[RMDB]
RNA sequence: GGGAACGACUCGAGUAGAGUCGAAAAUGAUGCUUCCAGUAGUGAAGGUAUCACGCCUCUGUUAGUGCAACAUGAAAUUGAAUGUAGAGCUAAGAUGCAAGAGAGAAUCCAGAAAGUUAUACUUCAUGGAAGCUCCCACUCAGGUGGGCUUGGAAUAGGUCCAAAGUUAUUUCGAUAACUUUGGACCAAAAGAAACAACAACAACAAC
Reactivity to DMS in 0.01 (KOAc 150mM, MgCl2 10mM, bicine 150mM(pH8.5), 24C), signal-to-noise 1, nucleotides 027 to 156: u000g000a000u010g020c000u000u020c010c000a150g010u030a220g010u030g040a040a040g010g000u000a080u000c050a110c010g010c050c000u000c000u000g000u000u010a050g010u000g010c020a300a050c030a040u020g000a060a160a100u020u010g010a200a090u000g010u010a050g000a290g010c000u000a020a050g000a080u000g010c060a000a140g010a120g010a090g000a090a180u000c030c010a150g000a110a090a070g040u000u010a090u000a140c050u010u000c050a090u010g000g010a060a080g020c020u000c030c010c000a030c030u010c050a150g000g030u000g030g050g010c110u010u030g010g010a070a100u000a170
Reactivity to 2A3 in 0.01 (KOAc 150mM, MgCl2 10mM, bicine 150mM(pH8.5), 24C), signal-to-noise 2, nucleotides 027 to 156: u120g050a060u160g000c000u000u000c000c000a050g100u130a010g100u080g080a090a010g040g000u050a000u090c010a010c140g010c010c010u000c000u000g000u080u030a020g010u020g040c040a020a030c000a060u080g090a060a180a180u220u110g090a140a030u050g000u100a090g020a010g130c000u010a000a020g030a040u180g040c060a070a000g000a020g000a000g000a130a010u050c040c010a000g190a100a070a000g030u060u010a030u020a100c000u020u000c020a080u040g000g000a000a000g010c000u010c020c030c000a000c030u080c020a030g000g040u000g010g000g000c020u020u040g030g000a140a030u050a220
Structure probing data (DMS and 2A3) for a 207-nucleotide construct. For DMS the reverse transcriptase was MarathonRT. The DMS profile rests on 1,986 reads. For 2A3, 861 sequencing reads were counted. The data come from the RNA Mapping Database (RMDB), library OK3TST. Conditions: 150 mM KOAc, 10 mM MgCl2 and 150 mM bicine (pH 8.5), 24 C.